The record gives the reactivity of an RNA of 177 nucleotides to DMS and 2A3. For DMS, 1,366 sequencing reads were counted. 2A3 adducts were read by reverse transcription with SuperScript II with manganese.
[RMDB]
RNA sequence: GGGAACGACUCGAGUAGAGUCGAAAAGCUGCCAGCUUCGGCUGGCAGCAAAGAACGCUGCAACGCGCAGCGCGCUCGCGACAGCGCGAAAGAGCGUAGAAAAAACUAGCAAGUUCGCUUGCUAGAACUUGCUUAAGCUGUUCGCAGCUUAAGCAAGAAAAGAAACAACAACAACAAC
Reactivity to DMS in 0.01 (KOAc 150mM, MgCl2 10mM, bicine 150mM(pH8.5), 24C), signal-to-noise 2, nucleotides 027 to 126: g030c020u000g000c000c030a020g010c010u000u000c160g010g000c000u000g010g000c020a000g000c000a020a030a080g010a190a040c030g030c000u000g000c100a110a210c060g030c020g010c000a050g030c010g010c010g000c130u010c200g000c090g000a070c090a110g000c000g000c010g020a040a090a140g000a020g000c020g000u000a140g000a010a060a030a030a150a170c000u000a000g000c000a020a000g000u000u030c270g010c000u000u000g000c010u000a000g000a080a110
Reactivity to 2A3 in 0.01 (KOAc 150mM, MgCl2 10mM, bicine 150mM(pH8.5), 24C), signal-to-noise 2, nucleotides 027 to 126: g000c010u020g000c000c000a000g000c060u080u090c190g110g030c010u000g000g050c000a000g000c000a010a010a000g000a010a000c030g030c020u140g000c030a090a040c050g020c010g000c040a040g030c000g030c010g010c040u150c130g040c000g070a180c080a030g030c000g000c000g050a030a140a020g100a000g000c020g020u080a000g100a000a140a020a010a000a010c000u000a010g020c000a020a000g010u070u100c200g040c100u010u020g020c000u010a000g010a030a010